[RMDB]
RNA sequence: GGGAACGACUCGAGUAGAGUCGAAAAUUACUGGCGCUGUAACAGGAAUCGUUUUGGCUUUGCAGUCCUAUUAUCAAUUGGGAAUACAUGGAUUGUCCUGCGCUAUAGGAUUUUUCGUGGUAAAAAGAGAAAUAUGGUAAUUCGUUACCAUAUUUCUAAAAGAAACAACAACAACAAC
Reactivity to DMS in 0.01 (KOAc 150mM, MgCl2 10mM, bicine 150mM(pH8.5), 24C), signal-to-noise 9, nucleotides 027 to 126: u010u010a070c040u000g010g010c070g030c050u010g010u000a080a090c110a080g010g010a090a080u010c110g010u000u010u000u000g010g010c070u000u000u000g010c050a080g010u000c020c010u000a060u010u000a090u010c140a080a130u000u010g010g000g000a110a070u010a050c040a040u010g000g000a040u000u000g010u000c030c010u000g020c190g020c150u000a060u010a020g000g010a030u000u000u000u000u000c040g030u010g010g010u010a040a050a060a090a100g000
Reactivity to 2A3 in 0.01 (KOAc 150mM, MgCl2 10mM, bicine 150mM(pH8.5), 24C), signal-to-noise 6, nucleotides 027 to 126: u080u050a040c030u030g050g000c030g000c030u040g030u110a060a030c010a080g070g070a090a070u090c080g030u030u070u080u120g040g000c000u060u020u090g000c010a020g030u010c000c010u120a150u250u060a140u120c090a100a110u140u150g070g000g060a080a040u090a100c020a030u040g030g000a030u030u020g010u030c010c010u040g040c090g000c050u080a100u260a180g000g000a000u030u010u000u020u040c030g020u060g050g030u110a120a110a020a030a000g120